This 207-nucleotide RNA was probed chemically with 2A3. For 2A3, 934 sequencing reads were counted. The reactions ran in a buffer of 150 mM KOAc, 10 mM MgCl2 and 150 mM bicine (pH 8.5), at 24 C.
[RMDB]
RNA sequence: GGGAACGACUCGAGUAGAGUCGAAAAAUUUAACAGGGCGUGCAUGGUCGCCCAGGCGAGGUCGGCGUGGCUGGCUUCCUCGCUGCGGCUGGCCUCAUAGGUGGCGCUGCGUCCGCUGCUGGUCAUGGUCUUGCGGAUAGCCAUAAACGAGCUGGUGCCAACCGUAUAGGUUCGCCUAUACGGUUGGAAAAGAAACAACAACAACAAC
Reactivity to 2A3 in 0.01 (KOAc 150mM, MgCl2 10mM, bicine 150mM(pH8.5), 24C), signal-to-noise 2, nucleotides 027 to 156: a010u150u190u120a060a040c030a010g030g040g000c040g030u050g000c040a070u170g080g040u070c020g010c000c000c000a010g040g030c070g000a000g010g010u020c000g030g060c030g040u020g030g000c060u060g000g040c100u180u100c070c030u000c070g010c000u000g000c000g120g040c020u060g010g000c000c030u000c010a030u120a040g030g030u030g020g030c100g000c000u040g020c000g060u000c000c000g000c000u070g020c050u040g060g070u090c040a100u080g030g000u050c020u070u130g040c020g020g050a070u060a010g020c000c000a070u070a090a120a050c110g000a000g050c010u070g030g020u080g090